Chemical mapping of a 177-nucleotide RNA with 2A3 and DMS. It was measured as part of the RMDB library M2PK90. Values cover nucleotides 27 to 126. The reactions ran in a buffer of 150 mM KOAc, 10 mM MgCl2 and 150 mM bicine (pH 8.5), at 24 C.
RNA sequence: GGGAACGACUCGAGUAGAGUCGAAAAAUUAACCCAGCCUAAAUGAAGAGCAGGACAAAAGGUUCGUCUGCAAACACUCCAUGGUAGACAGAGGAUGGCGAAAUGGAUGUGGACUAUUUGGAAGUAAUCUUUUUCAUCUAUUCGUAGAUGAAAAAGAAAAAGAAACAACAACAACAAC
Reactivity to 2A3 in 0.01 (KOAc 150mM, MgCl2 10mM, bicine 150mM(pH8.5), 24C), signal-to-noise 3, nucleotides 027 to 126: a000u100u050a040a090c000c000c000a000g050c030c040u120a110a110a060u160g080a090a050g010a010g060c030a010g040g060a060c050a010a190a020a020g090g040u110u070c040g040u060c040u030g010c000a060a040a020c020a010c020u000c010c000a010u040g010g040u040a020g030a020c020a020g130a070g200g080a120u040g010g010c040g030a020a000a000u020g020g000a030u170g010u020g000g030a030c030u050a060u100u090u080g060g040a060a070g050u100a060a120
Reactivity to DMS in 0.01 (KOAc 150mM, MgCl2 10mM, bicine 150mM(pH8.5), 24C), signal-to-noise 5, nucleotides 027 to 126: a100u000u010a120a130c010c000c000a180g020c040c020u000a020a050a040u000g010a110a080g010a190g020c030a040g010g000a060c090a070a060a080a110g010g000u000u000c080g000u000c010u000g000c040a080a070a130c040a030c030u000c010c020a050u000g020g000u000a160g000a040c040a020g000a130g020g000a090u010g010g000c010g000a090a110a020u000g010g000a040u010g020u000g010g000a110c070u000a050u000u000u000g000g010a080a120g010u010a080a100